[RMDB]
RNA sequence: GGGAACGACUCGAGUAGAGUCGAAAAGAUAUGGACCCGAGAGACUCGAGCUUUCGGAAACGAAAGAACUACUCGGUGGAAUGGGUCCUAAGUCAAACUUUGUUCCGUGUUCGCACGGAACAAAGAACAUAGAAACGACGUUCGCGUCGUUUCUAUGAAAAGAAACAACAACAACAAC
Reactivity to DMS in 0.01 (KOAc 150mM, MgCl2 10mM, bicine 150mM(pH8.5), 24C), signal-to-noise 3, nucleotides 027 to 126: g010a060u000a300u010g000g000a010c010c000c000g040a130g010a300g010a030c010u000c040g000a010g030c000u010u010u010c000g020g000a070a060a120c000g020a010a010a010g000a060a020c080u010a300c010u000c000g020g020u010g000g020a280a150u010g000g000g000u000c000c000u010a030a080g000u010c040a100a090a180c010u000u000u000g000u000u000c000c000g020u000g000u000u020c180g040c000a010c000g010g000a000a010c010a000a000a000g000a090a190
Reactivity to 2A3 in 0.01 (KOAc 150mM, MgCl2 10mM, bicine 150mM(pH8.5), 24C), signal-to-noise 1, nucleotides 027 to 126: g000a010u060a040u150g020g000a010c020c000c010g020a030g020a000g010a080c050u060c300g000a000g000c020u010u010u000c010g020g070a010a080a040c020g000a000a010a030g030a050a010c060u160a050c000u200c030g010g030u010g040g120a080a050u090g010g000g020u020c010c010u000a050a020g020u000c040a100a040a080c000u000u000u000g000u000u000c000c000g000u010g010u000u080c300g050c070a000c000g020g010a000a000c010a000a010a000g000a010a010